[RMDB]
RNA sequence: GGGAACGACUCGAGUAGAGUCGAAAAGAUAUGGAUGUGAACGAGCUAUCGAUUCGGAAACGAAUCAAUAGCGAUGAGUUCGACAUCCUAAGUCAAAAGACAGGGUUUUCUUCGGAAAACCCUGUCACUGUAGUGGAAACUUCGGUUUCCACUACAGAAAAGAAACAACAACAACAAC
Reactivity to 2A3 in 0.01 (KOAc 150mM, MgCl2 10mM, bicine 150mM(pH8.5), 24C), signal-to-noise 1, nucleotides 027 to 126: g020a000u020a040u170g000g000a020u000g020u010g040a000a020c030g000a050g020c010u000a010u030c050g060a030u000u010c000g040g050a050a050a060c000g000a000a010u000c030a010a000u020a000g010c020g000a090u110g040a040g000u000u000c020g050a010c020a000u040c000c000u010a080a030g040u010c000a000a050a050a180g000a000c000a010g000g040g040u020u020u010u060c070u170u230c300g200g000a000a000a000a000c020c000c010u010g000u000c000a000
Reactivity to DMS in 0.01 (KOAc 150mM, MgCl2 10mM, bicine 150mM(pH8.5), 24C), signal-to-noise 3, nucleotides 027 to 126: g000a050u000a300u010g000g000a010u000g010u000g000a020a010c000g010a120g030c000u000a000u000c030g010a020u000u010c000g040g000a070a030a140c000g010a010a000u000c000a030a000u000a000g020c000g020a100u010g040a300g010u000u010c010g010a040c000a000u010c000c000u000a020a120g010u000c020a160a100a150a110g010a000c000a020g000g000g010u000u000u000u000c000u000u010c290g040g000a010a000a010a010c000c000c000u000g000u000c000a010
This 177-nucleotide RNA was probed chemically with 2A3 and DMS. The DMS profile rests on 3,531 reads. The RNA was probed in 150 mM KOAc, 10 mM MgCl2 and 150 mM bicine (pH 8.5) at 24 C. For 2A3 the reverse transcriptase was SuperScript II with manganese.